RNA sequence: GGGAACGACUCGAGUAGAGUCGAAAAAUAAAUAUCAGUUAUAUGACUGACGGAACGUGGAAUUAACCACAUGAAGUAUAACGAUGACAAUGCCGACCGUCUGGGCGUUGCUUCCGCUCCAAAAAAACAUUAGCAGUAGGUUCGCCUACUGCUAAUGAAAAGAAACAACAACAACAAC
Reactivity to 2A3 in 0.01 (KOAc 150mM, MgCl2 10mM, bicine 150mM(pH8.5), 24C), signal-to-noise 1, nucleotides 027 to 126: a000u070a050a040a000u300a010u040c010a060g000u010u000a080u000a010u220g080a070c040u070g030a030c020g010g000a060a020c070g000u020g000g070a160a130u210u080a190a080c000c000a000c010a020u080g030a030a000g030u040a030u010a050a020c050g010a030u100g030a020c030a050a000u090g040c000c000g020a060c010c020g030u040c040u030g040g000g000c020g020u030u030g000c020u030u020c000c040g030c050u080c070c030a060a130a040a010a010a010a040
Reactivity to DMS in 0.01 (KOAc 150mM, MgCl2 10mM, bicine 150mM(pH8.5), 24C), signal-to-noise 2, nucleotides 027 to 126: a060u010a050a040a100u000a060u000c010a060g010u000u000a000u000a050u020g020a170c100u010g000a040c020g010g010a130a070c240g030u000g000g010a200a110u000u000a110a100c030c000a030c010a120u000g000a060a120g010u000a010u000a050a030c030g010a050u000g000a030c100a030a040u000g000c010c010g010a080c010c050g010u000c010u010g010g010g010c000g000u010u010g010c030u010u000c030c030g000c080u000c050c040a000a010a090a050a060a060a150

The data come from the RNA Mapping Database (RMDB), library M2PK90. The record gives the reactivity of an RNA of 177 nucleotides to 2A3 and DMS. The RNA was probed in 150 mM KOAc, 10 mM MgCl2 and 150 mM bicine (pH 8.5) at 24 C. DMS adducts were read by reverse transcription with MarathonRT. Values cover nucleotides 27 to 126. 2A3 adducts were read by reverse transcription with SuperScript II with manganese.